The record gives the reactivity of an RNA of 177 nucleotides to DMS.
It was measured as part of the RMDB library TTRDES.
For DMS, 1,065 sequencing reads were counted.
Reactivities are rounded to 0.1 and cut off at 0 and 3.
RNA sequence: GGGAACGACUCGAGUAGAGUCGAAAAGAUAUGGAUCGUUUCGGAGCGAUAAGCGUUAGGUCGGAAACGACCUUACGCUUUUGACGCUCUUCGACGAUCCUAAGUCAAAGUAGGGUUCGCCCUACAAGCUUAGGAGUGACUUCGGUCACUCCUAAGCAAAAGAAACAACAACAACAAC
Reactivity to DMS in 0.01 (KOAc 150mM, MgCl2 10mM, bicine 150mM(pH8.5), 24C), signal-to-noise 1, nucleotides 027 to 126: g000a050u010a300u000g000g010a030u020c000g020u000u000u030c190g010g010a000g020c000g000a100u020a040a030g010c000g030u000u000a020g000g010u010c000g000g000a120a120a100c030g010a000c000c070u000u000a010c010g010c030u000u000u050u020g040a230c130g000c010u000c000u000u000c180g000a010c040g010a010u020c000c000u020a000a070g000u000c060a180a160a100g010u000a000g000g000g020u000u000c250g010c000c010c000u010a000c010a030a160